[RMDB]
Source: RMDB library RNAMAK, as collected in RNAgym. Structure probing data (2A3 and DMS) for a 207-nucleotide construct. DMS adducts were read by reverse transcription with MarathonRT.
RNA sequence: GGGAACGACUCGAGUAGAGUCGAAAAGAAGGUUCGCCUUCAGCCUAUCCUAAGUCAAUGUUGGCAGUAUGGAGUGCGAUAAGGUUCGGAAACGAACCUUUUGACGCACUAUGAAGUACUGCGACAUUGAUAUGGAACAAUUCCGCUUCGGCGGAAACAUGUCCUGGAGUUUCGACUCCAGGACAUGAAAAGAAACAACAACAACAAC
Reactivity to 2A3 in 0.01 (KOAc 150mM, MgCl2 10mM, bicine 150mM(pH8.5), 24C), signal-to-noise 4, nucleotides 027 to 156: g010a010a010g070g010u100u190c240g110c050c010u000u000c010a040g020c010c010u060a140u030c000c010u050a120a060g010u010c000a000a010u020g040u000u090g300g010c010a000g000u010a000u040g050g040a020g010u000g000c000g040a040u010a080a010g010g010u010u000c000g040g020a100a070a070c030g000a000a010c010c060u000u000u010u040g020a010c010g010c000a000c010u030a300u060g030a050a000g000u000a010c000u000g000c000g000a000c000a000u000u000g000a000u000a020u030g000g000a040a000c060a090a140u070u000c010c010g010c010u050u050c210g140g020c020g050g000a070a000a010
Reactivity to DMS in 0.01 (KOAc 150mM, MgCl2 10mM, bicine 150mM(pH8.5), 24C), signal-to-noise 1, nucleotides 027 to 156: g020a110a030g020g070u020u010c250g050c020c000u010u000c000a130g000c070c060u000a080u000c000c020u000a040a300g020u000c000a010a000u000g050u000u020g020g030c000a020g000u010a030u030g010g040a030g070u010g030c020g030a190u020a010a000g020g000u000u000c000g030g040a120a210a300c020g000a020a010c000c000u010u020u020u020g020a300c080g030c000a020c000u000a050u000g000a180a230g000u010a050c020u000g050c010g010a000c010a020u000u000g020a010u000a280u000g000g050a050a040c080a120a230u000u010c020c000g090c000u000u000c220g090g050c020g000g000a000a020a060
The DMS profile rests on 1,677 reads.
Values are in units of 0.01, from 0 to 300, in steps of 10.
Reactivities are given for positions 27 through 156.